[RMDB]
RNA sequence: GGGAACGACUCGAGUAGAGUCGAAAAGGCAUCGCUCGCUGUAAAUUGUAAUCAUCAAAGCGUUUUCUCAGAGCCGCUUGGUGUUACUUCUUACAGUGAGUGUGCCAAAAAGAGAUCUUCGGAUCUCCUAUUGAUUCGUGUUCGCACGAAUCAAUAGAAAAGAAACAACAACAACAAC
Reactivity to DMS in 0.01 (KOAc 150mM, MgCl2 10mM, bicine 150mM(pH8.5), 24C), signal-to-noise 2, nucleotides 027 to 126: g010g030c000a010u010c000g020c000u000c010g020c000u000g000u000a010a010a020u010u000g010u000a010a010u000c020a000u000c000a040a010a060g010c010g010u010u010u000u010c160u020c240a150g010a070g010c250c000g000c010u000u000g000g020u010g030u000u000a010c010u000u000c020u000u000a000c000a010g030u000g000a000g030u000g010u000g020c000c010a060a040a030a100a120g010a020g010a000u000c010u000u010c220g020g010a010u000c000u010c010